The record gives the reactivity of an RNA of 207 nucleotides to 2A3 and DMS. For DMS, 1,758 sequencing reads were counted. The 2A3 profile rests on 1,802 reads.
RNA sequence: GGGAACGACUCGAGUAGAGUCGAAAACCUACUCAAUACGUCCUCGUCGUACAGAACGGUAACCUGUUUUCCGAACAUCCGCGCUUGGGUAUACGAGUAUACACCUUACCCAACCCUCGCCAACGGGAGUGCAUCCACGAGUUCGCUCGUGGAUGAAACGACGUGUUAGUUUCGACUAACACGUCGUAAAAGAAACAACAACAACAAC
Reactivity to 2A3 in 0.01 (KOAc 150mM, MgCl2 10mM, bicine 150mM(pH8.5), 24C), signal-to-noise 3, nucleotides 027 to 156: c010c010u030a060c060u060c040a060a100u060a130c050g030u010c010c030u070c030g030u000c010g060u070a070c020a080g060a120a030c010g000g060u090a060a040c010c000u030g040u070u010u040u040c040c020g010a070a040c030a110u060c060c020g060c000g040c080u040u010g000g040g030u060a080u050a120c040g010a040g070u020a010u020a030c090a090c040c040u050u040a050c010c010c000a020a030c020c020c000u020c030g040c050c030a070a050c000g010g010g030a040g050u130g040c000a000u000c020c000a000c000g000a010g010u080u050c240g060c080u000c000g010u010g000g000a000u000g000a010a020
Reactivity to DMS in 0.01 (KOAc 150mM, MgCl2 10mM, bicine 150mM(pH8.5), 24C), signal-to-noise 1, nucleotides 027 to 156: c020c010u000a060c020u000c040a100a230u000a060c070g000u000c000c010u000c010g040u000c070g000u020a250c080a100g000a090a040c000g030g010u000a060a110c040c100u000g010u030u020u010u010c050c000g000a100a110c090a130u010c010c000g020c040g020c060u000u000g030g040g000u000a020u010a210c080g000a110g030u000a140u000a110c100a140c030c080u010u000a080c040c000c010a160a140c010c020c060u000c150g040c050c080a080a070c000g000g030g010a070g000u000g030c000a010u000c010c010a000c000g000a010g040u000u000c300g000c000u000c020g050u000g000g010a010u000g010a020a040